[RMDB]
RNA sequence: GGGAACGACUCGAGUAGAGUCGAAAAACUAGGUGCGCACAUCUCUCUAAGACUGUACGACAGUCUGUCUCUCUAGCACGCUUGUUCAACGAGAGAGAGAGAGCGUUGGAACAAGUGUGCAACGAAAUAAUACACUGGGGUUCGCCCCAGUGUAUUAAAAAGAAACAACAACAACAAC
Reactivity to DMS in 0.01 (KOAc 150mM, MgCl2 10mM, bicine 150mM(pH8.5), 24C), signal-to-noise 4, nucleotides 027 to 126: a080c040u000a080g000g000u000g000c050g010c040a060c050a090u000c020u000c010u000c030u010a120a090g000a030c010u000g010u010a080c100g010a300c300a010g010u000c000u000g020u000c030u000c010u000c040u000a250g000c030a010c010g020c020u000u010g010u000u000c000a030a030c010g020a080g010a110g000a090g010a070g000a040g010a100g030c020g000u000u000g020g020a020a020c010a020a030g010u000g020u000g010c000a040a020c200g000a040a040a090
Reactivity to 2A3 in 0.01 (KOAc 150mM, MgCl2 10mM, bicine 150mM(pH8.5), 24C), signal-to-noise 2, nucleotides 027 to 126: a000c070u060a040g080g000u020g030c060g020c020a020c010a120u030c010u000c000u000c010u060a080a030g010a010c010u030g080u130a050c070g090a040c100a010g000u010c020u010g010u010c080u000c000u020c020u050a030g000c000a000c010g000c010u020u010g010u000u010c010a000a010c010g010a020g000a010g000a020g010a010g000a010g010a130g060c030g000u010u050g160g010a020a000c010a020a010g000u000g020u000g000c000a010a010c020g010a060a080a040
The record gives the reactivity of an RNA of 177 nucleotides to DMS and 2A3. DMS adducts were read by reverse transcription with MarathonRT. The data come from the RNA Mapping Database (RMDB), library M2PK90. 2A3 adducts were read by reverse transcription with SuperScript II with manganese.